[RMDB]
RNA sequence: GGGAACGACUCGAGUAGAGUCGAAAAUGGCCAGUGAGGAUUCCACACAGCUGGGCAGUCUGAGCUUGGCCGCACCCUCUGCAGCCCUGCUGGCAUCUCAGGAGAUGGGCCCGAGAGAGGGAGGGGCUGCACCGUCAGAAUUCGUUCUGACGGUGCAAAAAGAAACAACAACAACAAC
Reactivity to DMS in 0.01 (KOAc 150mM, MgCl2 10mM, bicine 150mM(pH8.5), 24C), signal-to-noise 3, nucleotides 027 to 126: u020g020g000c020c000a020g020u010g000a300g000g010a040u000u000c020c010a030c040a190c170a170g050c170u000g010g000g030c130a110g010u010c000u000g000a300g000c020u010u010g070g000c000c000g030c180a110c030c010c020u000c020u020g030c040a070g000c000c030c010u010g010c020u000g000g000c100a140u000c020u000c050a030g020g030a160g010a130u000g020g010g010c010c020c050g000a080g010a030g000a200g000g000g010a070g000g000g000g030c130
Reactivity to 2A3 in 0.01 (KOAc 150mM, MgCl2 10mM, bicine 150mM(pH8.5), 24C), signal-to-noise 1, nucleotides 027 to 126: u170g000g020c010c000a010g020u000g020a020g000g000a010u070u070c040c010a030c000a010c040a080g110c170u050g000g000g000c010a010g020u000c010u040g010a000g000c030u170u230g000g000c010c010g050c040a070c020c000c000u070c030u040g000c010a000g040c030c000c030u080g060c010u050g130g000c020a160u000c050u030c060a130g050g070a160g060a110u130g010g090g050c070c000c000g160a160g010a000g030a030g020g050g010a050g000g020g040g000c010